The record gives the reactivity of an RNA of 177 nucleotides to DMS and 2A3. For DMS the reverse transcriptase was MarathonRT. In probing experiments dimethyl sulfate is read out at A N1 and C N3, which are open when not base-paired. It was measured as part of the RMDB libraries RFM100 and RFMREP.
RNA sequence: GGGAACGACUCGAGUAGAGUCGAAAACCGGUGGAACUACAGGACGUGAAGGUUGCGGGUUCGACUCCCGCCCCGGCGACGGGUAGCUCAACUGGAUAGAGCAACGCGCAUGUUCCACCAACGAUCGUAACACUGUUAUAUUCGUAUAACAGUGUUAAAAAGAAACAACAACAACAAC
Reactivity to DMS in 0.01 (KOAc 150mM, MgCl2 10mM, bicine 150mM(pH8.5), 24C), signal-to-noise 9, nucleotides 027 to 126: c020c020g010g030u000g000g010a010a010c000u010a130c180a130g020g020a160c010g010u000g010a060a020g000g010u020u000g020c010g000g000g000u000u000c020g010a300c050u000c000c000c000g000c000c010c000c020g010g000c300g000a230c010g000g000g010u000a020g000c010u000c000a010a010c140u030g000g010a300u020a020g000a010g000c010a300a020c010g000c010g010c020a160u010g010u000u000c000c000a010c000c010a060a030c190g010a140u030c190g000
Reactivity to 2A3 in 0.01 (KOAc 150mM, MgCl2 10mM, bicine 150mM(pH8.5), 24C), signal-to-noise 9, nucleotides 027 to 126: c000c000g000g000u000g000g010a020a010c020u120a100c150a230g120g160a140c010g010u010g040a060a010g010g010u050u010g000c000g000g000g000u000u000c000g000a000c000u000c000c000c000g010c000c000c000c000g020g010c030g030a090c010g000g000g000u000a000g000c000u000c000a020a030c100u160g030g070a200u060a040g000a000g000c000a000a010c000g000c000g000c010a030u090g000u000u000c000c000a000c000c000a010a000c020g040a090u170c080g040